[RMDB]
RNA sequence: GGGAACGACUCGAGUAGAGUCGAAAAGCAUUGAGAGGACCUUUCCCUAGUACGAGAGGACCGGGAAGGACGCACCUCUGGUGUACCAGUUAUCGUGCCCACGGUAAACGCUGGGUAGCCAAGUGCGACUCCAUAACUUGUUCGCAAGUUAUGGAGUAAAAGAAACAACAACAACAAC
Reactivity to 2A3 in 0.01 (KOAc 150mM, MgCl2 10mM, bicine 150mM(pH8.5), 24C), signal-to-noise 7, nucleotides 027 to 126: g070c070a120u200u300g090a080g020a080g120g120a100c010c000u010u130u180c020c000c000u010a010g020u030a030c020g020a010g010a040g110g000a000c000c000g000g000g000a010a010g010g010a030c020g000c000a010c000c000u000c000u000g000g000u050g070u240a040c000c000a000g010u020u050a010u050c020g030u070g120c010c040c040a020c010g010g000u060a110a150a030c090g020c030u020g000g000g090u070a010g000c000c000a050a020g010u000g000c000g020
Reactivity to DMS in 0.01 (KOAc 150mM, MgCl2 10mM, bicine 150mM(pH8.5), 24C), signal-to-noise 6, nucleotides 027 to 126: g030c150a110u010u040g030a090g020a120g000g000a140c040c020u010u000u000c000c000c000u020a060g010u000a160c020g010a220g000a140g000g000a060c240c130g000g000g000a060a020g000g030a200c020g010c050a010c000c010u000c000u000g000g020u010g010u050a300c000c000a000g000u000u000a010u000c000g010u020g020c080c070c080a300c000g010g000u000a040a110a070c150g020c050u000g000g000g000u060a300g000c000c000a040a070g020u000g000c000g000
Chemical mapping of a 177-nucleotide RNA with 2A3 and DMS. Values cover nucleotides 27 to 126. It was measured as part of the RMDB library OK1LIB. The DMS profile rests on 12,725 reads.